Source information: This 177-nucleotide RNA was probed chemically with DMS and 2A3. The data come from the RNA Mapping Database (RMDB), library TTRINS. The RNA was probed in 150 mM KOAc, 10 mM MgCl2 and 150 mM bicine (pH 8.5) at 24 C. For DMS, 19,998 sequencing reads were counted. As a SHAPE reagent, 2A3 marks flexible, mostly unpaired nucleotides at the ribose 2'-OH. Values cover nucleotides 27 to 126. The 2A3 profile rests on 27,025 reads. For DMS the reverse transcriptase was MarathonRT.
[RMDB]
RNA sequence: GGGAACGACUCGAGUAGAGUCGAAAAGAUAUGGAUCCUAUACGCUACAUACGAGUAGGGACAGGAUUGACAGCUCGGAAACGAGCUUUCUCGAUUCCCUACUCGUAUGAGCGUAGGAUCCUAAGUCCAGUGCAUAAUAGUUCGCUAUUAUGCACUGAAAAGAAACAACAACAACAAC
Reactivity to DMS in 0.01 (KOAc 150mM, MgCl2 10mM, bicine 150mM(pH8.5), 24C), signal-to-noise 9, nucleotides 027 to 126: g010a090u000a300u010g010g010a010u000c000c010u000a170u010a100c030g020c000u000a140c010a010u000a000c010g000a030g010u000a010g010g000g010a150c300a150g000g000a100u010u010g010a040c140a020g010c000u000c000g010g000a090a100a230c010g000a010g000c000u000u000u000c010u000c040g000a300u000u000c000c000c000u000a010c000u000c000g000u000a000u000g010a040g020c000g020u000a000g000g010a010u000c000c000u000a010a080g000u000c040
Reactivity to 2A3 in 0.01 (KOAc 150mM, MgCl2 10mM, bicine 150mM(pH8.5), 24C), signal-to-noise 8, nucleotides 027 to 126: g080a020u120a080u270g000g010a000u020c010c010u110a160u080a210c040g020c040u300a300c280a000u000a010c010g010a000g010u010a000g050g020g030a040c140a120g260g180a300u110u180g040a030c040a010g000c010u010c010g060g000a080a110a050c010g020a000g000c010u000u020u010c020u010c000g110a200u070u100c000c010c000u010a000c000u000c000g000u000a000u000g010a000g000c000g000u000a000g000g000a000u010c000c000u010a160a000g000u020c040